[RMDB]
RNA sequence: GGGAACGACUCGAGUAGAGUCGAAAAAGUCCAGGUGUUGGACGUGGCGCUCCUGAAAUUGACAUUCUUGAAGGUUCAACAGAGAAGCUACAUCCCGACGAUGAACUAGACAUUGGUGUAGUUUCUAGUAAAUUAAAUCAUUCGUGAUUUAAUUUACAAAAGAAACAACAACAACAAC
Reactivity to 2A3 in 0.01 (KOAc 150mM, MgCl2 10mM, bicine 150mM(pH8.5), 24C), signal-to-noise 4, nucleotides 027 to 126: a010g030u020c020c010a050g140g150u180g110u150u070g010g010a010c000g010u010g020g000c040g020c060u030c010c020u000g090a170a140a110u030u050g010a020c030a060u140u070c100u110u180g120a200a060g060g000u120u050c020a010a010c000a020g040a010g000a120a020g030c000u020a010c000a040u020c030c010c000g000a020c030g050a050u120g030a110a070c050u020a060g040a070c040a100u060u120g040g020u030g010u010a080g000u010u000u000c010u010a000
Reactivity to DMS in 0.01 (KOAc 150mM, MgCl2 10mM, bicine 150mM(pH8.5), 24C), signal-to-noise 5, nucleotides 027 to 126: a110g010u000c010c010a060g010g030u020g020u010u000g010g010a040c040g020u000g010g000c030g010c040u010c040c010u000g010a060a060a100u000u010g010a150c060a110u000u000c130u000u000g010a110a130g000g010u000u000c030a050a070c070a070g000a300g010a040a250g020c010u000a020c030a100u000c030c040c040g010a090c100g010a080u000g000a070a070c060u000a080g000a090c120a130u000u000g010g000u000g010u000a040g010u000u000u000c010u000a170